[RMDB]
RNA sequence: GGGAACGACUCGAGUAGAGUCGAAAAACCUCAGUCUUCGGACUGAGGUGAGCGGAGCAUGGUGGCGGUGGGAACUCCUCCUUGGUGACAAGGGCCCACGGGGUGCGGCACGCUUCGGCGUGCCGAAUGUAAACAUCAUUUUCGAAUGAUGUUUACAAAAAGAAACAACAACAACAAC
Reactivity to 2A3 in 0.01 (KOAc 150mM, MgCl2 10mM, bicine 150mM(pH8.5), 24C), signal-to-noise 4, nucleotides 027 to 126: a000c000c000u000c000a000g000u000c000u020u150c230g160g010a000c010u000g000a000g000g000u000g000a020g000c060g020g040a050g040c100a090u090g050g040u090g050g000c080g010g020u040g020g000g010a060a070c040u040c030c010u020c010c000u020u030g040g020u080g030a040c020a030a010g000g010g010c000c010c000a000c020g020g000g000g020u060g030c030g010g000c010a010c010g020c000u030u050c190g080g000c000g000u010g000c010c000g000a000a020
Reactivity to DMS in 0.01 (KOAc 150mM, MgCl2 10mM, bicine 150mM(pH8.5), 24C), signal-to-noise 9, nucleotides 027 to 126: a030c000c000u000c000a010g000u000c000u000u010c210g020g010a010c000u000g000a010g010g010u000g000a040g010c090g000g010a110g000c100a070u000g010g010u000g000g010c090g010g020u000g010g000g000a100a060c070u010c060c070u000c020c010u000u000g010g000u020g000a170c040a020a030g000g010g010c020c010c020a060c080g000g000g000g010u000g010c020g000g000c000a010c000g010c010u000u010c120g020g010c000g020u000g000c000c000g010a010a020